[RMDB]
RNA sequence: GGGAACGACUCGAGUAGAGUCGAAAAGGUCAUAUAAUAGCAGUGGUGUGGUAGACCAUAAUACUUCUAGGUUUGAUAAAAUGCAAACAAAAACGAAGAAAACACAAACGAAGUUCCAACAUUUAUGUUAAAUGCUGGACAAGCAAAUUACGCUUUCGUAUAUGGCACUCUUCGGAGUGCCAUAUACAAAAGAAACAACAACAACAAC
Reactivity to 2A3 in 0.01 (KOAc 150mM, MgCl2 10mM, bicine 150mM(pH8.5), 24C), signal-to-noise 1, nucleotides 027 to 156: g000g000u000c000a010u120a010u050a300a040u090a030g010c020a010g000u020g050g000u020g000u010g000g000u000a040g070a050c000c020a040u150a110a000u000a150c030u010u110c080u060a030g150g060u020u010u010g000a000u090a150a240a160a100u300g050c010a000a060a030c040a030a070a040a110a020c140g000a050a020g000a010a090a020a000c060a010c030a030a050a000c100g040a080a000g010u090u050c010c000a000a020c000a070u050u030u030a070u120g050u040u070a010a090a000u070g000c000u000g000g010a010c030a020a000g050c010a010a080a230u190u120a040c100g030c000u000u000u040c020
The record gives the reactivity of an RNA of 207 nucleotides to 2A3. For 2A3 the reverse transcriptase was SuperScript II with manganese. The 2A3 profile rests on 457 reads. Conditions: 150 mM KOAc, 10 mM MgCl2 and 150 mM bicine (pH 8.5), 24 C. The data come from the RNA Mapping Database (RMDB), library RSTRND.